An RNA of 177 nucleotides, treated with 2A3 and DMS and read out base by base. 2A3 adducts were read by reverse transcription with SuperScript II with manganese. Reactivities are given for positions 27 through 126. The data come from the RNA Mapping Database (RMDB), library OK2TRN. The DMS profile rests on 3,666 reads. The 2A3 profile rests on 689 reads. The RNA was probed in 150 mM KOAc, 10 mM MgCl2 and 150 mM bicine (pH 8.5) at 24 C.
[RMDB]
RNA sequence: GGGAACGACUCGAGUAGAGUCGAAAAAAAUCACCAGCAAGAUAGUGAGCGGUAAUAGCCUGAUUGCAGGAGAGCAGUUAAAUGUGUCUGGUAUGACUCGCAAGGCUAAGAAGGGCAAGCGUAAGAAUGCCCUUAAUUGGUUCGCCAAUUAAGGGCAAAAAGAAACAACAACAACAAC
Reactivity to 2A3 in 0.01 (KOAc 150mM, MgCl2 10mM, bicine 150mM(pH8.5), 24C), signal-to-noise 1, nucleotides 027 to 126: a000a000a000u090c050a050c000c000a000g020c030a120a040g060a150u070a110g050u030g060a040g040c030g000g040u030a040a060u040a040g070c020c020u100g010a110u090u240g080c040a020g010g090a080g070a040g000c050a040g000u020u090a050a110a150u210g120u020g000u000c000u000g090g030u160a140u100g040a040c000u000c010g030c000a040a040g040g000c040u030a060a030g110a030a050g080g000g010c050a080a060g030c030g010u000a040a000g060a150a060
Reactivity to DMS in 0.01 (KOAc 150mM, MgCl2 10mM, bicine 150mM(pH8.5), 24C), signal-to-noise 4, nucleotides 027 to 126: a040a050a060u010c040a110c020c010a100g010c100a070a080g010a140u000a070g020u000g010a120g020c040g010g000u000a090a090u000a100g010c030c020u000g020a100u000u000g010c040a050g000g010a080g010a100g010c040a020g010u010u010a020a070a080u000g010u000g010u000c020u020g020g020u000a040u010g010a060c050u010c070g010c070a070a060g000g000c050u000a040a060g010a100a080g000g000g020c050a030a100g010c090g010u010a070a090g000a070a100